Source: RMDB library OK3TST, as collected in RNAgym. Chemical mapping of a 207-nucleotide RNA with 2A3. The RNA was probed in 150 mM KOAc, 10 mM MgCl2 and 150 mM bicine (pH 8.5) at 24 C.

RNA sequence: GGGAACGACUCGAGUAGAGUCGAAAACAGCUUUGUAGGGGGCACGCUAAACCUACUUAAAAGGACUGUUCUCUCGAUGUUGGGAGAAGGGUCAUUUAUUUGCAGUAUGCUAAUCACAAAUAAUUUUUAUCUGUUCAUUGAAGGCAGCCUCCCAGGACCUCUUACCGAUUUUCGAAUCGGUAAGAGGAAAAGAAACAACAACAACAAC
Reactivity to 2A3 in 0.01 (KOAc 150mM, MgCl2 10mM, bicine 150mM(pH8.5), 24C), signal-to-noise 2, nucleotides 027 to 156: c020a000g020c040u100u130u300g100u040a010g000g010g000g030g050c010a010c080g040c010u100a110a000a000c070c000u030a040c030u140u110a160a160a030a010g030g030a030c000u060g200u160u000c000u000c000u010c060g160a300u210g110u220u300g030g000g000a000g010a000a010g000g000g040u000c000a000u070u100u100a090u000u080u080g010c000a000g170u170a060u130g000c000u080a020a050u160c020a070c040a070a140a070u160a170a190u220u120u230u170u190a010u130c030u030g080u090u270c080a070u110u180g050a060a000g100g020c010a000g000c000c020u020c000c000c000a020g070g130a200